RNA sequence: GGGAACGACUCGAGUAGAGUCGAAAAGGGGGAUGUAACGCAUGGCCAUGUACAGCAUCCGGCUCGACGGCGACACGCGGGCGAUGCUCCGUAGGAUCAGGAGCUUCUCGGAGAUCGACAAGCAGGGCAUCAAUGCGGCACUGGCUGAGGGCGCGCGAAGUGUCGUAUAUUUCGAUAUACGACACUUAAAAGAAACAACAACAACAAC
Reactivity to 2A3 in 0.01 (KOAc 150mM, MgCl2 10mM, bicine 150mM(pH8.5), 24C), signal-to-noise 4, nucleotides 027 to 156: g010g020g010g000g010a020u050g010u130a170a000c040g010c040a020u070g020g010c020c010a020u070g020u090a080c010a040g000c000a060u030c030c020g060g000c040u050c060g180a230c040g020g090c070g040a050c030a000c130g020c000g000g020g010c030g040a060u090g050c000u030c020c010g040u090a080g040g060a050u090c060a100g000g060a040g030c040u080u000c050u020c030g040g000a080g000a060u020c010g060a050c040a060a040g040c030a040g000g040g000c000a010u070c020a010a110u100g020c000g000g000c010a040c120u020g020g020c030u050g020a100g030g030g000c050g000c010g010c050g070
Reactivity to DMS in 0.01 (KOAc 150mM, MgCl2 10mM, bicine 150mM(pH8.5), 24C), signal-to-noise 2, nucleotides 027 to 156: g000g040g020g010g000a140u010g020u000a060a070c080g020c040a090u010g010g030c030c020a070u010g080u010a080c060a120g020c030a090u010c030c030g020g000c030u000c010g020a110c060g010g030c030g040a160c110a080c000g030c060g000g020g000c050g000a080u000g010c000u000c000c020g000u010a190g020g000a130u000c050a150g030g030a090g010c150u000u010c060u000c050g000g030a110g010a090u000c040g000a090c010a050a200g030c030a100g000g000g020c070a110u000c090a060a120u020g030c050g040g010c040a050c040u000g030g000c020u010g000a090g030g030g030c040g080c050g000c100g020
The record gives the reactivity of an RNA of 207 nucleotides to 2A3 and DMS. The RNA was probed in 150 mM KOAc, 10 mM MgCl2 and 150 mM bicine (pH 8.5) at 24 C. Reactivities are given for positions 27 through 156. For 2A3, 2,627 sequencing reads were counted.